[RMDB]
RNA sequence: GGGAACGACUCGAGUAGAGUCGAAAAAGAUGAAAUGGGUGAUCCGCAGCCAAGUCCUAAGGACGUAUAAUGUCUAUGGAUGCAGUUCAACGACUAGAUGGCAGUGGGUGUUGUUAAGACUUAGGUUUUUACAAUGCUUAAGGUAUAGUCUAUUCUCGAUUCAUCAGAUCUUCGGAUCUGAUGAAUCAAAAGAAACAACAACAACAAC
Reactivity to 2A3 in 0.01 (KOAc 150mM, MgCl2 10mM, bicine 150mM(pH8.5), 24C), signal-to-noise 2, nucleotides 027 to 156: a000g080a050u110g030a020a090a050u120g040g000g030u060g050a090u040c030c000g000c050a000g030c010c000a010a020g020u000c010c020u080a060a100g040g030a010c010g040u080a110u100a290a110u260g000u000c010u010a060u060g010g000a010u040g020c040a010g010u050u090c070a070a030c100g060a010c020u050a050g030a160u070g060g030c030a030g020u060g000g040g000u020g020u000u000g000u010u040a060a000g010a050c000u020u020a050g060g010u020u000u010u020u090a050c050a010a040u060g000c000u050u020a050a020g050g010u050a070u060a110g010u020c010u040a130u060u000c070u020c050
Reactivity to DMS in 0.01 (KOAc 150mM, MgCl2 10mM, bicine 150mM(pH8.5), 24C), signal-to-noise 2, nucleotides 027 to 156: a170g040a170u000g010a060a050a080u010g000g000g030u000g010a080u020c040c020g000c050a220g040c030c010a070a300g000u000c040c020u000a130a200g010g010a030c040g030u000a120u000a080a130u000g020u010c010u000a300u030g020g000a090u000g000c140a020g010u000u020c040a130a070c070g060a070c080u000a130g000a140u010g020g000c070a090g030u010g010g000g010u000g050u000u000g000u000u000a070a090g010a020c020u010u010a040g000g010u000u010u000u050u020a080c040a080a070u000g020c000u000u000a040a020g000g000u000a050u020a110g010u020c010u000a180u020u010c090u000c110